[RMDB]
RNA sequence: GGGAACGACUCGAGUAGAGUCGAAAAGUUUGAACAGGGCGUGAGAGUUGGAGCUGAUGGUGGGCCGUUGGAAGACGUUGAAGGCGCAGCGUGGCAGACCGGCGGCCUCGCGCACGAAGCGCUCGUAACUGCGCAGUAACGUGUGCACCAGCGCGGCCCCACAGUUUGAAUUCGUUCAAACUGUGGGAAAAGAAACAACAACAACAAC
Reactivity to 2A3 in 0.01 (KOAc 150mM, MgCl2 10mM, bicine 150mM(pH8.5), 24C), signal-to-noise 1, nucleotides 027 to 156: g000u000u020u180g050a060a020c000a030g000g000g000c010g040u020g000a060g000a000g030u040u010g000g050a030g000c010u120g010a120u060g000g070u010g000g000g000c000c000g020u010u010g000g060a170a100g070a050c050g020u060u060g040a110a060g040g050c020g000c070a000g010c020g000u030g070g000c030a040g050a130c030c000g050g000c000g010g040c070c000u020c020g010c000g000c000a020c030g020a000a010g010c000g040c000u100c160g050u070a040a050c090u010g000c000g000c030a040g020u050a110a040c020g030u000g020u050g000c000a010c000c000a040g000c060g000c000g010g050c000